[RMDB]
RNA sequence: GGGAACGACUCGAGUAGAGUCGAAAACAUGUCAGCCAUGCCAAUGCAAUGACAACCUUGACUUCUCCAUCCCUGGCAGCUGUGACAGCUUGUCUGGCUCCUGUCUGAUAUGUAAACCAGGUACAACAGGCCGGUACUGUGAGCUCUGUGCUGAUGAAUAAAUUACUACCUUCGGGUAGUAAUUUAUAAAAGAAACAACAACAACAAC
Reactivity to DMS in 0.01 (KOAc 150mM, MgCl2 10mM, bicine 150mM(pH8.5), 24C), signal-to-noise 3, nucleotides 027 to 156: c030a070u010g010u010c040a050g030c000c020a100u000g010c010c020a080a140u000g010c120a080a100u010g010a100c020a060a110c040c010u000u010g010a090c030u000u000c030u000c040c030a100u000c050c010c050u010g010g030c040a100g000c020u000g040u000g010a130c080a070g020c050u000u000g040u000c030u000g010g010c010u000c040c020u010g000u000c020u020g020a100u000a050u000g010u000a090a070a110c050c010a020g010g020u020a060c050a050a070c040a060g010g030c030c020g020g030u000a040c060u010g010u000g010a150g030c020u000c050u000g020u010g010c000u000g000a110u000g010a130
Reactivity to 2A3 in 0.01 (KOAc 150mM, MgCl2 10mM, bicine 150mM(pH8.5), 24C), signal-to-noise 4, nucleotides 027 to 156: c050a030u070g030u020c020a010g020c070c010a050u080g010c010c030a190a040u130g030c030a070a190u150g020a070c030a030a090c030c030u090u110g060a080c010u070u000c050u030c050c010a090u070c020c010c020u010g020g000c040a010g000c040u040g030u100g190a050c050a020g020c020u070u050g030u050c020u020g020g010c020u020c030c010u080g040u040c000u010g040a050u040a050u190g090u070a020a020a030c010c020a020g060g040u070a060c020a130a010c010a080g040g000c000c060g030g030u070a070c040u040g050u080g080a010g020c010u020c030u090g040u020g020c020u020g020a070u030g040a050